[RMDB]
RNA sequence: GGGAACGACUCGAGUAGAGUCGAAAAUUGCAAUAAAAAGGAAAAAUUAUUUAACCAACAACUCGACAUGGUCUGCUCUGGAAAUCUCCAGUGUUUACGUUGCGAAAACAAUUGAAAUCAUAACAAUACUUCCUAUAUCAUUCGUGAUAUAGGAAGUAAAAGAAACAACAACAACAAC
Reactivity to 2A3 in 0.01 (KOAc 150mM, MgCl2 10mM, bicine 150mM(pH8.5), 24C), signal-to-noise 4, nucleotides 027 to 126: u040u080g010c020a030a080u170a160a140a050a000a030g060g020a160a120a120a020a040u140u120a140u050u160u090a080a060c010c000a010a020c030a020a060c030u040c060g060a040c020a030u090g030g040u020c020u010g040c020u020c010u050g000g080a080a170a160u130c100u000c030c000a030g010u020g050u090u010u010a020c040g000u040u010g010c020g050a020a030a060a030c060a030a050u040u120g090a080a050a040u220c090a070u080a080a030c030a100a010u020
Reactivity to DMS in 0.01 (KOAc 150mM, MgCl2 10mM, bicine 150mM(pH8.5), 24C), signal-to-noise 3, nucleotides 027 to 126: u000u010g000c050a040a090u010a030a040a050a090a110g020g010a030a070a080a070a040u010u010a100u010u030u000a050a110c050c010a080a090c070a060a050c110u010c100g010a020c030a050u010g010g030u010c030u000g010c020u000c040u000g000g000a040a110a070u020c090u000c010c040a060g010u000g020u000u000u010a080c150g010u000u010g010c070g000a030a050a050a090c110a040a040u000u010g000a040a070a090u020c100a070u000a060a050c090a040a180u000